[RMDB]
RNA sequence: GGGAACGACUCGAGUAGAGUCGAAAAAUUUGUGGAUUCUGUAUUUUCUAAAUCACCUCCUCACUAAAGUGUGUAUGUAAUCCCAAAUCAACACUCGCAGCACAUUUGCAAACAUCCACAGAGCCUUGGAAAGUUUGAAUAAUCCAACCUACAUGUCGUAGUAUGAUGAGUUCGCUCAUCAUACUACAAAAGAAACAACAACAACAAC
Reactivity to 2A3 in 0.01 (KOAc 150mM, MgCl2 10mM, bicine 150mM(pH8.5), 24C), signal-to-noise 3, nucleotides 027 to 156: a000u060u060u050g020u020g010g020a030u090u000c070u090g080u070a200u070u150u040u080c120u160a110a140a120u080c010a080c000c010u020c010c010u050c010a030c020u090a030a050a060g030u030g010u000g020u030a080u160g040u050a050a120u040c000c010c000a030a030a070u100c060a010a090c030a010c050u050c060g000c010a010g020c010a010c000a070u060u070u070g000c010a010a100a000c020a040u020c010c000a010c000a010g020a020g030c010c010u040u020g030g020a080a080a050g030u060u120u110g050a070a060u110a070a010u030c010c000a030a040c030c010u070a050c030a080u260g060u250c060
Reactivity to DMS in 0.01 (KOAc 150mM, MgCl2 10mM, bicine 150mM(pH8.5), 24C), signal-to-noise 2, nucleotides 027 to 156: a180u000u000u010g040u000g020g010a020u000u000c080u010g020u000a080u010u010u000u000c060u000a060a090a120u010c050a090c060c040u000c010c010u000c060a090c130u010a050a040a020g000u000g040u000g000u000a060u010g010u000a060a120u010c020c000c010a020a110a130u000c100a050a070c070a020c040u000c040g010c060a040g020c040a060c070a080u000u000u000g020c020a110a080a080c060a120u000c020c010a050c010a060g010a070g020c040c080u010u000g000g000a050a120a070g000u000u000u010g010a130a120u000a030a110u000c020c010a040a040c060c010u000a010c100a080u000g020u000c080
Notes: The record gives the reactivity of an RNA of 207 nucleotides to 2A3 and DMS. DMS (dimethyl sulfate) methylates the pairing face of unpaired adenines and cytosines. Source: RMDB library OK3TST, as collected in RNAgym. The DMS profile rests on 2,623 reads. Reactivities are given for positions 27 through 156.